RNA sequence: GGGAACGACUCGAGUAGAGUCGAAAACUUAGCUUGGCUUAGUGUCUUAAGGUAGGACCUUCAGGAAUUUCAGUAUAGAGAUCCCUCUGGAAGCAGCAGCCUCUCCUUCCUUAUCUCCAGAGGAGUGGGGGGUGACCUGGGCUGUAUGAUGGGAAUAGAUACCACUUUUAUUCGUAAAAGUGGUAUCAAAAGAAACAACAACAACAAC
Reactivity to 2A3 in 0.01 (KOAc 150mM, MgCl2 10mM, bicine 150mM(pH8.5), 24C), signal-to-noise 2, nucleotides 027 to 156: c000u030u020a020g120c030u060u200g070g030c000u030u050a030g020u060g050u090c000u030u080a090a010g000g010u030a020g000g160a040c010c040u010u060c120a050g000g050a120a060u100u100u180c020a060g020u090a150u100a250g070a030g000a070u030c000c000c010u030c030u050g040g040a080a040g040c000a020g000c040a030g000c000c000u040c020u040c000c000u080u060c010c010u050u080a150u090c110u020c050c030a000g020a030g060g010a010g020u060g000g010g000g000g000g000u010g020a000c010c060u040g010g070g000c030u040g030u080a150u110g050a060u090g030g010g070a040a040u100a100
Reactivity to DMS in 0.01 (KOAc 150mM, MgCl2 10mM, bicine 150mM(pH8.5), 24C), signal-to-noise 1, nucleotides 027 to 156: c040u000u000a100g030c020u010u000g030g000c030u020u000a100g060u010g010u010c030u010u010a100a090g000g000u000a100g000g030a140c010c020u000u010c000a000g030g000a020a030u020u000u000c030a140g060u010a150u010a140g000a090g000a040u000c000c010c010u020c030u000g040g020a030a030g000c060a120g010c090a200g020c000c000u000c020u020c020c010u010u000c010c000u000u000a110u020c090u010c050c100a210g000a030g000g010a070g010u000g010g010g010g030g030g010u010g010a060c100c040u000g020g030g070c010u000g050u010a060u000g000a110u000g010g040g020a090a100u000a100